An RNA of 177 nucleotides, treated with DMS and 2A3 and read out base by base. Conditions: 150 mM KOAc, 10 mM MgCl2 and 150 mM bicine (pH 8.5), 24 C. For DMS the reverse transcriptase was MarathonRT. The DMS profile rests on 33,125 reads. For 2A3, 18,681 sequencing reads were counted.

RNA sequence: GGGAACGACUCGAGUAGAGUCGAAAACAUGCAGGCGUCUGGUGCUAGCCGUGCAGCGCCAGGGUCAGCACUGCGUGCUGAGGCGGCGGAAGCGCCGCUGUCACGCCCGGCGAUUGGGCUACACGACGCAUGAGCCGAGCUUCGGUUUGGUUCGUGCAAAAGAAACAACAACAACAAC
Reactivity to DMS in 0.01 (KOAc 150mM, MgCl2 10mM, bicine 150mM(pH8.5), 24C), signal-to-noise 7, nucleotides 027 to 126: c030a030u020g010c070a060g000g000c010g000u010c010u010g010g010u000g010c050u000a080g020c000c060g020u010g020c100a040g000c010g010c000c000a020g000g010g000u030c030a060g000c010a060c010u010g000c100g010u000g000c070u000g000a240g000g010c010g010g010c000g000g000a150a100g000c020g010c000c000g000c000u010g010u010c040a090c190g000c000c020c020g010g000c100g010a140u020u010g000g000g000c190u020a040c060a060c090g010a110c130
Reactivity to 2A3 in 0.01 (KOAc 150mM, MgCl2 10mM, bicine 150mM(pH8.5), 24C), signal-to-noise 5, nucleotides 027 to 126: c010a010u040g010c010a000g020g000c000g000u000c000u020g010g000u000g000c010u020a030g000c020c040g080u090g010c010a000g000c000g000c000c000a010g010g000g020u110c000a010g000c020a020c010u040g000c010g010u010g000c020u040g040a030g010g000c000g000g000c000g010g040a080a030g090c000g000c000c000g000c000u000g010u010c000a010c040g010c000c000c000g010g030c060g060a080u050u120g020g000g000c000u010a010c080a000c050g070a010c040